[RMDB]
RNA sequence: GGGAACGACUCGAGUAGAGUCGAAAACAACCACGCUACGGCGUGGUUGAACUGCGGAGCUACGGCUCCGCAGAACAGCACGUACGCGUGCUGAACUAAGACUUCGGUCUUAGACCACGGCUACGGCCGUGGAGAGCAGCACUACGGUGCUGCUCAAGUAACGCUUCGGCGUUACAAGACAACGCUUCGGCGUUGUCACACCAUACUUCGGUAUGGUGACACCAGGCUACGGCCUGGUGAAACGUGGGUUAUACGAUAAUAACCGUAAGCCGACGUUCGCGUCGGCUAAAAGAAACAACAACAACAAC
Reactivity to DMS in 0.01 (KOAc 150mM, MgCl2 10mM, bicine 150mM(pH8.5), 24C), signal-to-noise 1, nucleotides 027 to 266: c000a010a030c000c000a010c000g000c000u000a120c170g070g000c010g030u010g000g000u000u000g000a050a210c000u000g000c010g030g000a000g000c020u010a080c150g040g000c000u010c000c000g020c000a000g020a080a300c030a000g000c000a000c000g020u030a050c240g030c010g050u000g010c010u010g010a250a220c060u000a000a000g000a010c000u010u050c170g070g000u000c000u000u000a020g000a210c000c000a000c000g010g000c000u000a140c230g030g030c010c020g030u000g010g010a120g020a020g000c000a040g020c030a020c010u020a100c130g020g030u000g000c000u000g050c030u010c000a010a110g000u000a000a000c000g020c000u030u000c170g000g000c000g000u010u000a010c020a110a130g020a000c000a000a000c000g000c000u000u030c110g000g000c000g030u000u000g000u020c010a210c020a000c000c000a010u000a000c010u000u000c140g000g010u000a000u000g000g000u000g000a150c000a000c000c000a020g020g000c000u000a110c170g010g020c000c010u000g020g000u000g010a010a080a150c020g010u000g000g000g000u000u000a040u000a040c000g010a090u000a040a040u000a010a020c020c000g040u010a040
Reactivity to 2A3 in 0.01 (KOAc 150mM, MgCl2 10mM, bicine 150mM(pH8.5), 24C), signal-to-noise 2, nucleotides 027 to 266: c000a000a000c000c000a010c000g020c010u030a040c280g180g000c000g010u000g000g000u000u000g000a030a010c000u000g000c000g000g000a000g010c000u040a070c300g100g000c000u010c000c000g000c000a000g000a010a020c000a000g000c000a000c000g060u100a020c270g020c000g130u000g000c000u000g000a030a020c020u000a000a000g010a000c000u010u140c300g100g020u000c000u000u000a020g000a010c000c000a000c010g000g000c000u050a080c300g130g000c000c000g000u000g000g010a020g000a000g000c000a000g000c000a000c000u040a030c280g100g000u000g010c000u000g000c000u000c000a000a000g000u000a000a000c000g000c020u050u100c210g090g000c010g000u010u000a000c000a000a010g000a000c000a010a010c000g010c010u040u110c210g120g010c000g000u000u000g000u000c000a010c000a000c010c000a000u000a000c000u030u050c180g090g000u000a000u000g010g010u000g000a000c000a000c000c000a000g000g000c000u040a080c250g130g000c010c000u000g010g000u010g000a020a020a000c030g000u030g070g000g000u010u000a020u020a020c050g100a080u020a080a010u020a040a000c000c010g020u040a050
This 307-nucleotide RNA was probed chemically with DMS and 2A3. Source: RMDB library POS240, as collected in RNAgym. Reactivities are rounded to 0.1 and cut off at 0 and 3. The reactions ran in a buffer of 150 mM KOAc, 10 mM MgCl2 and 150 mM bicine (pH 8.5), at 24 C. The DMS profile rests on 3,268 reads.